[RMDB]
RNA sequence: GGGAACGACUCGAGUAGAGUCGAAAAUUGACUAGAGGCACAUUGGAACCAGAAAAUUUCAAUAGUGUCACUAGAUUGAUGUGUAACUUAGGUCCUGACAUAUUUUUAAGUAUGUGCUACAGGUGUCGUAAUACUAGGGGUUCGCCCCUAGUAUUACAAAAGAAACAACAACAACAAC
Reactivity to 2A3 in 0.01 (KOAc 150mM, MgCl2 10mM, bicine 150mM(pH8.5), 24C), signal-to-noise 2, nucleotides 027 to 126: u000u020g000a000c010u000a020g010a030g030g030c000a000c010a020u000u000g020g000a010a010c030c010a100g290a080a140a020a000u010u000u000c000a000a010u040a100g010u010g010u020c000a000c020u010a000g170a150u010u040g010a000u040g060u020g000u080a060a060c050u030u090a040g050g050u070c000c000u020g000a000c000a000u020a010u040u090u000u020u080a080a060g020u010a000u020g020u020g030c050u060a070c030a040g060g000u000g120u170c060
Reactivity to DMS in 0.01 (KOAc 150mM, MgCl2 10mM, bicine 150mM(pH8.5), 24C), signal-to-noise 4, nucleotides 027 to 126: u000u000g010a020c000u000a000g010a030g030g020c000a000c000a040u010u010g010g010a000a010c060c090a260g000a080a100a100a210u000u000u000c000a010a010u000a130g020u010g000u000c000a070c000u000a000g000a180u000u000g000a010u000g010u000g000u010a090a090c110u000u010a120g010g000u000c000c010u000g000a090c020a010u000a000u020u010u000u000u010a070a170g010u000a010u000g000u000g000c130u000a160c040a030g000g030u000g000u010c140